Chemical mapping of a 177-nucleotide RNA with DMS. It was measured as part of the RMDB library TTRINS.
[RMDB]
RNA sequence: GGGAACGACUCGAGUAGAGUCGAAAAGAUAUGGAGCAGAGGAGAACUAGCGUGGAUUAGCGUUUCCAUCGGAAACGAUGGGACGCGACGAUCCACGAACUACUAGUUCUCCUCUGCUCCUAAGUCAGACACGUAUUUAGUUCGCUAAAUACGUGUCAAAAGAAACAACAACAACAAC
Reactivity to DMS in 0.01 (KOAc 150mM, MgCl2 10mM, bicine 150mM(pH8.5), 24C), signal-to-noise 3, nucleotides 027 to 126: g000a070u000a300u020g000g010a010g020c000a020g040a020g020g000a010g000a000a020c000u000a010g000c000g040u000g000g000a020u000u010a300g000c000g010u000u000u010c000c000a000u000c000g010g000a170a110a140c000g010a010u000g000g000g010a010c010g010c000g000a080c300g000a010u000c000c010a030c000g000a020a020c100u010a300c000u000a010g000u000u000c010u000c010c000u010c000u000g000c000u000c000c000u010a000a040g000u010c010a170